[RMDB]
RNA sequence: GGGAACGACUCGAGUAGAGUCGAAAAUACCGUCUUCGCCCCGACGGUUUCAAUCCAUAGCUUCACGUUGUGUAGCGUAGGUGGAAGGUAUCGUGUGGUGUAUAAACACCACAUAGUCUCUUAGGGGUCAAGCUGAUAAACUUCGGUUUAUCAGCAAUCUUUGUAGGCGAUUCGUCGCCUACAAAGAAAAAGAAACAACAACAACAAC
Reactivity to DMS in 0.01 (KOAc 150mM, MgCl2 10mM, bicine 150mM(pH8.5), 24C), signal-to-noise 2, nucleotides 027 to 156: u010a020c010c010g010u000c010u000u000c130g010c010c000c000c010g000a020c000g000g000u000u010u010c040a090a130u000c010c000a070u020a150g030c020u000u010c020a040c040g030u010u000g030u010g040u010a030g030c020g080u000a010g040g060u010g040g000a090a110g010g010u000a060u010c080g050u000g020u000g010g050u000g000u000a170u010a200a110a130c000a010c000c000a000c010a010u000a030g000u000c040u000c030u000u000a170g050g020g050g020u000c050a080a190g000c000u000g000a010u000a000a020a020c000u000u010c300g040g020u010u000u000a000u000c000a000g030c000a000a010
Reactivity to 2A3 in 0.01 (KOAc 150mM, MgCl2 10mM, bicine 150mM(pH8.5), 24C), signal-to-noise 4, nucleotides 027 to 156: u030a000c000c000g020u000c010u070u130c050g020c020c000c010c000g000a000c010g000g030u030u010u050c030a030a050u000c010c000a050u040a100g000c000u030u060c020a040c070g300u300u300g010u080g020u060a010g030c010g060u080a110g020g120u010g020g040a040a030g090g030u090a040u130c050g000u000g000u000g030g010u010g080u030a090u140a290a210a010c010a000c000c000a000c000a000u000a000g010u000c000u000c020u100u210a020g000g000g010g000u030c030a050a020g000c000u000g010a000u000a000a000a000c000u020u040c170g100g010u000u000u000a000u000c000a000g000c000a000a000